RNA sequence: GGGAACGACUCGAGUAGAGUCGAAAAGCAAAUAUUGUCUUAAUUACUUAGGCUAAAAGAAAUAAGUAUUAAAGCGGGACUAGGCAUCGACAUUUGAUACAAAUAUUGAUCAAUGGAUGUCUUAUUUAAACCUCAUCCGGCUUCGGCCGGAUGAGAAGUAGAUCUUACACUUCGGUGUAAGAUCUACAAAAGAAACAACAACAACAAC
Reactivity to 2A3 in 0.01 (KOAc 150mM, MgCl2 10mM, bicine 150mM(pH8.5), 24C), signal-to-noise 1, nucleotides 027 to 156: g030c040a070a120a090u180a070u140u150g030u020c020u040u130a130a190u120u000a050c000u050u040a030g070g000c060u240a160a070a080a060g030a000a130a030u040a050a030g010u010a010u110u070a120a060a000g050c080g000g070g020a000c020u010a020g010g000c030a000u000c050g080a160c040a080u070u100u280g030a010u100a110c050a030a080a110u250a110u120u290g020a000u010c000a000a000u000g040g030a010u010g000u000c000u000u020a040u040u060u040a070a050a000c000c000u010c000a000u010c010c000g020g020c000u020u110c200g100g020c000c000g000g020a000u000g000a000g010a000a000